Structure probing data (DMS and 2A3) for a 177-nucleotide construct. The reactions ran in a buffer of 150 mM KOAc, 10 mM MgCl2 and 150 mM bicine (pH 8.5), at 24 C. For DMS the reverse transcriptase was MarathonRT.

RNA sequence: GGGAACGACUCGAGUAGAGUCGAAAAGGGAACGCAGUACCUUUUCAUCUAAACCUUUGCACGAGUAAUUAAAGAUCCGCUUGACGAGCCUAUAUGGAAGAGCGUGCCAGGUAUUUGACUUAAGGACAUAAUAUUGCUUCUUCGGAAGCAAUAUUAUAAAAGAAACAACAACAACAAC
Reactivity to DMS in 0.01 (KOAc 150mM, MgCl2 10mM, bicine 150mM(pH8.5), 24C), signal-to-noise 9, nucleotides 027 to 126: g010g000g000a110a090c080g000c160a110g010u020a120c000c000u000u000u010u000c020a050u010c030u010a030a040a040c020c000u000u010u020g010c000a020c000g000a040g010u030a090a100u020u010a020a020a030g010a140u010c130c020g020c010u020u010g010a050c020g000a020g000c010c010u000a030u010a030u060g000g000a010a020g010a070g010c010g000u000g010c000c300a010g000g010u000a020u010u000u000g000a030c230u010u000a030a040g010g010a070c110
Reactivity to 2A3 in 0.01 (KOAc 150mM, MgCl2 10mM, bicine 150mM(pH8.5), 24C), signal-to-noise 9, nucleotides 027 to 126: g040g000g030a080a030c100g020c180a040g030u150a230c000c000u010u010u010u020c020a030u010c020u110a100a070a090c010c000u020u040u180g010c010a010c010g010a020g070u210a200a160u140u110a050a050a010g060a170u070c110c020g010c050u130u200g010a020c010g000a000g000c000c010u150a150u050a060u300g030g010a060a050g090a030g300c010g000u010g000c010c040a010g020g000u040a120u040u020u050g040a040c040u060u080a050a020g020g010a010c000